[RMDB]
RNA sequence: GGGAACGACUCGAGUAGAGUCGAAAAACCAGUUCAUGGUCUGAGAUGUUACAACUACACAUUUUCCAUCUUCAGAUUGGAAAUCUUGAAGAAUCUUACCAAUAUUUUUAUCAUCUGGAAGUGCCAACUCCUGAAGGUAAUUCGUUACCUUCAGGAGAAAAGAAACAACAACAACAAC
Reactivity to 2A3 in 0.01 (KOAc 150mM, MgCl2 10mM, bicine 150mM(pH8.5), 24C), signal-to-noise 9, nucleotides 027 to 126: a000c010c000a010g020u090u110c100a080u120g000g030u000c030u050g040a010g010a070u030g040u180u150a100c070a210a070c100u210a070c040a030c030a100u070u070u070u020c030c010a030u010c010u080u060c010a020g000a050u020u040g040g050a040a080a050u040c070u090u150g030a090a050g030a090a080u050c060u100u090a130c040c000a050a060u030a160u100u140u040u110u090a140u160c040a010u020c020u020g050g010a090a030g030u020g110c030c030a020a020
Reactivity to DMS in 0.01 (KOAc 150mM, MgCl2 10mM, bicine 150mM(pH8.5), 24C), signal-to-noise 3, nucleotides 027 to 126: a110c040c000a120g010u030u010c140a040u050g000g000u000c000u020g020a050g000a080u000g010u000u000a010c220a060a060c100u050a060c190a080c190a100u020u000u000u000c060c040a080u000c000u010u020c020a060g000a030u010u020g030g010a040a060a080u000c060u000u000g030a030a080g000a060a100u010c070u000u000a080c100c040a020a060u020a020u010u000u020u000u000a010u020c060a040u020c060u000g040g010a060a040g010u000g040c090c080a070a300